[RMDB]
RNA sequence: GGGAACGACUCGAGUAGAGUCGAAAAGAUAUGGACGCUUCGAUAAGCUAGGGUCGGAAACGACCCAUAGCUUUUGACGAAGGUCCUAAGUCAAACGUUCACAAUGGGUUCGCCCAUUGUGAACGAACUUUGUGAACUUGUUCGCAAGUUCACAAAGAAAAGAAACAACAACAACAAC
Reactivity to DMS in 0.01 (KOAc 150mM, MgCl2 10mM, bicine 150mM(pH8.5), 24C), signal-to-noise 3, nucleotides 027 to 126: g000a050u010a280u000g000g020a010c000g020c010u010u000c010g010a130u010a020a010g010c000u000a040g010g000g010u000c010g010g000a080a070a220c000g000a020c000c000c000a020u000a010g010c000u000u000u000u010g010a190c100g020a030a000g010g000u000c000c000u000a010a050g010u000c020a090a080a270c030g000u000u000c000a000c010a000a000u000g000g000g000u010u010c300g010c010c000c000a020u000u000g020u000g010a000a010c000g010a020a050
Reactivity to 2A3 in 0.01 (KOAc 150mM, MgCl2 10mM, bicine 150mM(pH8.5), 24C), signal-to-noise 2, nucleotides 027 to 126: g010a010u060a030u120g000g010a030c070g030c300u000u000c020g060a080u010a180a030g000c000u000a000g000g010g010u010c010g040g000a100a060a020c020g010a010c010c010c000a010u000a000g000c000u020u040u050u100g080a050c010g000a010a010g000g000u000c010c000u030a120a000g050u020c060a140a060a060c030g000u000u000c000a000c000a000a000u000g010g000g060u080u110c270g110c030c010c000a010u010u000g010u000g000a000a000c010g010a010a010
Structure probing data (DMS and 2A3) for a 177-nucleotide construct. For 2A3, 4,918 sequencing reads were counted. For 2A3 the reverse transcriptase was SuperScript II with manganese. The reactions ran in a buffer of 150 mM KOAc, 10 mM MgCl2 and 150 mM bicine (pH 8.5), at 24 C.